[RMDB]
RNA sequence: GGGAACGACUCGAGUAGAGUCGAAAAACUCUGAGCGUAAUCGGGUCUUGACUAGACUAUAGGUGACGUGAGUAUCUAUCCCAUUGUGCAUAGCGAUGGGAUAAUACGCUGAUCUAUAGUCACGGAAUGAUCCAAUAGGAUUCGUCCUAUUGGAUCAAAAAGAAACAACAACAACAAC
Reactivity to 2A3 in 0.01 (KOAc 150mM, MgCl2 10mM, bicine 150mM(pH8.5), 24C), signal-to-noise 7, nucleotides 027 to 126: a000c030u020c030u050g100a100g140c100g200u220a090a150u030c020g010g000g020u020c010u050u070g050a030c020u020a080g000a000c000u000a010u010a030g130g030u050g070a060c100g060u040g080a060g020u010a010u020c100u010a000u000c010c000c010a000u000u020g020u040g020c130a150u260a220g010c010g010a000u000g000g000g010a000u010a000a000u010a000c000g000c020u030g030a010u000c000u000a000u000a010g010u010c010a010c040g040g080a140a140
Reactivity to DMS in 0.01 (KOAc 150mM, MgCl2 10mM, bicine 150mM(pH8.5), 24C), signal-to-noise 9, nucleotides 027 to 126: a020c010u000c000u000g010a120g020c180g020u010a090a120u000c010g000g000g010u000c000u000u000g000a290c030u010a090g000a010c000u000a010u000a010g000g020u000g010a180c220g010u000g010a120g010u000a010u000c190u000a010u000c000c000c000a020u000u000g010u000g000c300a080u010a100g000c000g000a010u000g000g000g000a000u000a000a010u000a000c000g010c030u000g000a040u000c000u000a000u000a010g000u000c000a090c220g000g000a120a100
Record summary:
Chemical mapping of a 177-nucleotide RNA with 2A3 and DMS. The data come from the RNA Mapping Database (RMDB), library M2PK90. For DMS, 15,458 sequencing reads were counted.